Chemical mapping of a 177-nucleotide RNA with DMS and 2A3.

RNA sequence: GGGAACGACUCGAGUAGAGUCGAAAAAUGAGAUGUACUGGGUGAGCCACGCUUCAGGCAAUAUCGUCCACUCCGUCAACAUGACAAGCCAGGUGCUUCUGGGGAGGAUGGAAAAGAAAACAUGGAACUUGCAGUCGUACUUCGGUACGACUGCAAGAAAAGAAACAACAACAACAAC
Reactivity to DMS in 0.01 (KOAc 150mM, MgCl2 10mM, bicine 150mM(pH8.5), 24C), signal-to-noise 1, nucleotides 027 to 126: a130u000g000a190g000a000u010g080u000a020c030u010g000g000g070u000g040a140g140c020c000a080c030g000c080u000u040c020a120g000g000c170a000a090u000a010u060c230g000u000c030c000a090c000u000c090c060g030u000c020a040a120c300a100u000g040a070c000a090a220g000c040c120a160g000g000u000g010c100u030u080c120u010g000g000g000g000a010g000g000a110u000g000g000a000a060a000a040g000a120a200a110a090c220a120u000g000g000a000a120
Reactivity to 2A3 in 0.01 (KOAc 150mM, MgCl2 10mM, bicine 150mM(pH8.5), 24C), signal-to-noise 1, nucleotides 027 to 126: a000u270g030a020g000a000u080g000u010a120c000u070g000g000g060u000g060a000g110c080c000a010c030g100c000u260u200c130a090g000g040c000a000a020u000a000u100c030g000u000c000c000a000c130u000c020c030g180u300c080a070a070c000a140u190g010a010c000a040a040g000c030c050a090g130g000u250g070c000u110u110c150u060g030g000g050g000a000g000g210a120u160g000g000a010a000a010a010g030a030a100a000a000c100a030u030g000g060a000a030

For DMS, 814 sequencing reads were counted. It was measured as part of the RMDB library OK1LIB. The reactions ran in a buffer of 150 mM KOAc, 10 mM MgCl2 and 150 mM bicine (pH 8.5), at 24 C. DMS adducts were read by reverse transcription with MarathonRT. Reactivities are given for positions 27 through 126.